[RMDB]
RNA sequence: GGGAACGACUCGAGUAGAGUCGAAAAGAAAGAAAGAAGGUCGCAUUUCUCCUUCUUACCAGCGCGUUUUCAGUUUCAUAGGGAAGCCUUUCCAUGAAACUGGAGCGCCUGGAGGAGAAGGGGCCAAGCACUUAUCACUGUUCGCAGUGAUAAGUGCAAAAGAAACAACAACAACAAC
Reactivity to 2A3 in 0.01 (KOAc 150mM, MgCl2 10mM, bicine 150mM(pH8.5), 24C), signal-to-noise 6, nucleotides 027 to 126: g100a000a050a010g110a030a080a010g130a070a050g040g010u050c040g020c200a150u020u040u000c000u010c000c000u010u020c000u030u010a050c000c000a010g000c010g000c000g090u130u060u120u260c000a010g000u000u000u000c040a050u230a220g020g010g080a100a200g150c060c090u020u030u010c000c000a000u000g000a000a000a000c000u000g000g000a000g000c000g000c000c000u000g020g000a020g050g040a000g000a000a000g010g000g000g000c010c000a020a010
Reactivity to DMS in 0.01 (KOAc 150mM, MgCl2 10mM, bicine 150mM(pH8.5), 24C), signal-to-noise 1, nucleotides 027 to 126: g000a190a040a080g000a200a030a090g020a040a050g020g000u000c000g020c120a240u000u000u000c000u000c020c000u000u000c000u000u030a140c000c000a000g060c290g030c000g000u000u000u000u000c040a020g000u000u010u000c000a010u000a280g060g000g000a030a150g050c260c120u020u000u000c000c010a040u000g030a030a000a000c000u010g000g000a000g000c000g040c030c000u000g000g000a030g000g000a000g000a000a000g000g000g000g000c110c040a170a140
Structure probing data (2A3 and DMS) for a 177-nucleotide construct. The RNA was probed in 150 mM KOAc, 10 mM MgCl2 and 150 mM bicine (pH 8.5) at 24 C. For DMS, 1,675 sequencing reads were counted.